The data come from the RNA Mapping Database (RMDB), library M2RFPK. The record gives the reactivity of an RNA of 207 nucleotides to 2A3 and DMS.
[RMDB]
RNA sequence: GGGAACGACUCGAGUAGAGUCGAAAAGAAUUGGUAUGUAAGCUACUUCUUCCAGUAGCUGCGUCAUAACAUCAAGGUUAUGCAAACUGAGCCGAAGCUCAGCUUCGGUCCUCCAAGGAAGACCAAAUACAGCUCAGCCCGUUCGCGGGCUGAGCAACUUGAAUGUAGAGUUCGCUCUACAUUCAAGAAAAGAAACAACAACAACAAC
Reactivity to 2A3 in 0.01 (KOAc 150mM, MgCl2 10mM, bicine 150mM(pH8.5), 24C), signal-to-noise 3, nucleotides 027 to 156: g080a020a100u020u040g010g000u050a050u080g010u020a000a040g000c010u010a000c000u070u140c000u010u020c000c000a000g000u000a000g020c000u010g000c000g000u020c000a000u010a000a010c020a070u230c200a120a070g300g000u000u000a000u000g020c000a060a060a020c020u030g000a000g000c000c000g000a000a000g000c020u050c300a040g000c000u010u000c000g000g020u000c020c010u070c040c050a050a070g010g000a020a000g010a010c010c070a040a060a030u240a130c080a030g000c000u000c000a010g000c000c010c000g030u070u060c160g010c000g100g000g000c000u000g000a000g000c000a000a000
Reactivity to DMS in 0.01 (KOAc 150mM, MgCl2 10mM, bicine 150mM(pH8.5), 24C), signal-to-noise 1, nucleotides 027 to 156: g050a130a160u000u020g020g030u000a030u010g000u000a100a150g000c020u000a010c000u000u000c090u000u000c130c060a130g020u000a020g000c000u000g000c050g020u010c030a030u000a030a030c020a300u000c120a200a110g010g040u020u000a050u000g050c120a100a080a080c060u010g000a130g000c030c020g000a070a140g000c000u000c140a040g000c010u000u000c030g040g000u000c000c000u010c030c050a100a080g000g010a090a080g020a100c060c010a060a030a130u010a090c080a080g000c030u000c010a040g010c000c000c010g070u000u000c300g010c070g060g000g010c000u000g020a020g030c010a000a010
The RNA was probed in 150 mM KOAc, 10 mM MgCl2 and 150 mM bicine (pH 8.5) at 24 C. For DMS, 2,238 sequencing reads were counted. Values cover nucleotides 27 to 156.